Overview:
Source: RMDB library OK1LIB, as collected in RNAgym. An RNA of 177 nucleotides, treated with 2A3 and DMS and read out base by base. 2A3 adducts were read by reverse transcription with SuperScript II with manganese. The reactions ran in a buffer of 150 mM KOAc, 10 mM MgCl2 and 150 mM bicine (pH 8.5), at 24 C.
RNA sequence: GGGAACGACUCGAGUAGAGUCGAAAAGAAGUGGCAGGGACAUGCCCCAAAAGCUCGUUCUAGCAACAUAUGUUUGGCUAGUUCGAGCGAUUAGUCUAGAGGAGCGUCCUCUCGCCUCUUGACGAGAACCUGGAUGAGGGUUCGCCCUCAUCCAGGUAAAAGAAACAACAACAACAAC
Reactivity to 2A3 in 0.01 (KOAc 150mM, MgCl2 10mM, bicine 150mM(pH8.5), 24C), signal-to-noise 2, nucleotides 027 to 126: g070a120a000g030u040g010g000c020a020g030g020g000a080c040a040u200g050c000c000c000c000a050a050a040a000g020c000u000c000g000u000u000c000u010a000g000c010a020a110c030a050u240a070u300g100u170u110u040g190g000c000u000a000g000u000u000c000g020a000g010c000g000a000u000u070a010g070u040c110u050a010g000a060g110g000a060g040c060g000u000c000c000u010c000u050c070g000c000c000u030c000u010u020g040a000c060g020a020g050a050
Reactivity to DMS in 0.01 (KOAc 150mM, MgCl2 10mM, bicine 150mM(pH8.5), 24C), signal-to-noise 1, nucleotides 027 to 126: g000a100a040g000u010g010g020c050a110g000g000g000a020c070a030u010g000c000c030c030c090a140a180a110a050g000c000u000c000g000u010u040c000u000a020g010c000a000a010c030a190u060a220u020g000u000u000u000g030g030c000u000a000g060u010u000c040g000a040g010c030g030a000u000u000a060g010u000c100u000a010g000a180g000g010a080g000c090g000u030c010c000u000c060u040c100g000c040c000u000c000u000u000g010a110c080g000a300g000a040